The record gives the reactivity of an RNA of 207 nucleotides to 2A3 and DMS. The DMS profile rests on 7,112 reads. The data come from the RNA Mapping Database (RMDB), library OK3TST. The RNA was probed in 150 mM KOAc, 10 mM MgCl2 and 150 mM bicine (pH 8.5) at 24 C. Values cover nucleotides 27 to 156.

RNA sequence: GGGAACGACUCGAGUAGAGUCGAAAAGUCAGCCGGGAGAAAUGGUGAGUUUGCUGUGAGUGAGAGAAGUGGUCCCAUUGUUCGAGUUGCAGCAUUCAGAUACGCCGCGGCAUCGCGUGGAUCUGGUAUUUGAAGAUGUGGCUGAAUUGACGUGGCGUACUACAUGGCGUUUCGACGCCAUGUAGUAAAAAGAAACAACAACAACAAC
Reactivity to 2A3 in 0.01 (KOAc 150mM, MgCl2 10mM, bicine 150mM(pH8.5), 24C), signal-to-noise 4, nucleotides 027 to 156: g060u050c030a010g030c040c020g030g020g000a090g020a050a110a020u080g060g000u070g020a070g020u020u120u110g050c020u020g030u050g060a050g030u040g020a050g000a010g010a110a020g020u030g030g030u030c020c030c030a070u070u120g060u050u050c030g030a030g030u030u030g020c010a040g010c020a060u050u070c020a010g020a060u010a040c020g000c010c000g010c000g030g010c050a070u110c040g020c030g080u070g030g020a020u000c070u090g020g010u070a100u080u100u160g050a030a020g020a040u060g030u060g130g000c040u040g040a100a070u050u050g010a000c030g000u000g010g000c010g010
Reactivity to DMS in 0.01 (KOAc 150mM, MgCl2 10mM, bicine 150mM(pH8.5), 24C), signal-to-noise 3, nucleotides 027 to 156: g010u000c030a080g010c050c070g010g010g000a110g010a060a080a080u000g030g020u000g000a090g000u000u000u010g030c020u000g010u010g000a090g010u010g010a100g010a100g000a040a070g030u000g040g000u000c020c000c000a230u010u010g000u000u000c020g010a300g010u000u000g010c020a050g020c090a200u010u000c020a150g000a100u000a030c010g030c000c020g020c030g030g000c090a070u000c140g000c060g050u000g020g000a040u000c030u030g010g020u000a090u010u000u010g010a060a080g010a080u010g030u010g020g020c000u000g010a090a090u000u000g020a000c020g020u000g020g020c040g020